[RMDB]
RNA sequence: GGGAACGACUCGAGUAGAGUCGAAAAGGAUCUGAGUACUUAUAAGUGCGAAGUGAGUGAGGGUCUUACGAGCACUAAUUACAUCCCUCUAUUAAGUAUCGAAGAUCGGCCGGAGAUCGAGAUACAACUAUUAUCCGGCGACUGUACGAAGAUCCGACGAUCGGUAUAAUUUCGAUUAUACCGAUCGAAAAGAAACAACAACAACAAC
Reactivity to 2A3 in 0.01 (KOAc 150mM, MgCl2 10mM, bicine 150mM(pH8.5), 24C), signal-to-noise 5, nucleotides 027 to 156: g010g010a000u000c000u040g010a010g040u010a010c020u070u160a100u070a300a030g000u000g000c010g030a060a020g010u010g000a000g010u090g010a010g000g010g020u100c000u010u010a000c010g000a000g020c010a010c050u150a100a130u150u090a050c060a100u100c000c030c000u020c020u000a160u150u210a150a040g000u000a000u000c010g030a020a020g000a030u010c030g050g000c000c000g010g010a010g000a010u000c000g000a010g000a060u010a010c000a050a000c010u050a040u300u030a070u030c000c000g010g000c010g050a060c070u080g000u000a000c000g000a000a000g000a000u000c000c000g000a000
Reactivity to DMS in 0.01 (KOAc 150mM, MgCl2 10mM, bicine 150mM(pH8.5), 24C), signal-to-noise 3, nucleotides 027 to 156: g020g000a050u000c020u000g000a300g060u000a000c020u000u010a140u010a110a060g000u000g000c010g000a170a200g030u000g010a050g010u000g010a080g000g020g000u000c050u020u000a080c050g010a300g000c030a050c020u000a070a110u000u000a120c090a130u010c040c020c030u000c030u010a210u000u020a030a200g010u020a020u010c030g000a220a160g010a060u000c020g020g040c000c140g010g020a080g000a030u000c000g010a300g010a110u000a040c070a060a100c110u000a050u000u020a110u000c000c000g000g000c030g030a100c070u000g000u000a070c030g000a240a120g030a060u000c030c000g000a110